[RMDB]
RNA sequence: GGGAACGACUCGAGUAGAGUCGAAAAGUAAAUAAACGGCACCUAUAAGGUGGUCCCGAACCAGCGUGACCUACCAACACGCAACGAGCAGUCUGGUAUGACUGCAAACCUAAGGUAAACAAAAAAAGUAUAUUACUAGCUUCGGCUAGUAAUAUACAAAAGAAACAACAACAACAAC
Reactivity to 2A3 in 0.01 (KOAc 150mM, MgCl2 10mM, bicine 150mM(pH8.5), 24C), signal-to-noise 2, nucleotides 027 to 126: g010u030a010a080a210u220a130a240a040c020g060g010c010a010c010c020u100a110u060a300a110g000g010u020g000g060u050c000c010c040g020a040a050c030c020a020g000c010g000u010g060a140c000c020u000a020c010c020a000a010c050a010c010g000c030a020a050c060g020a040g000c000a000g000u010c010u130g110g180u300a130u180g020a020c000u000g000c000a000a000a030c010c020u070a120a040g000g000u050a030a170a050c060a030a110a000a030a000a030a060
Reactivity to DMS in 0.01 (KOAc 150mM, MgCl2 10mM, bicine 150mM(pH8.5), 24C), signal-to-noise 2, nucleotides 027 to 126: g000u010a040a100a090u020a080a080a100c080g000g010c010a000c000c020u000a050u000a130a050g040g010u000g010g000u020c070c000c030g000a130a090c160c130a170g000c040g000u000g000a020c020c000u000a030c010c030a300a010c000a000c000g000c000a110a090c150g000a120g000c000a010g010u000c000u000g000g000u020a110u030g010a000c000u000g000c000a000a070a090c070c060u010a080a060g010g000u000a060a120a090c080a000a020a060a100a030a090a100
The data come from the RNA Mapping Database (RMDB), library M2PK90. The record gives the reactivity of an RNA of 177 nucleotides to 2A3 and DMS. The RNA was probed in 150 mM KOAc, 10 mM MgCl2 and 150 mM bicine (pH 8.5) at 24 C.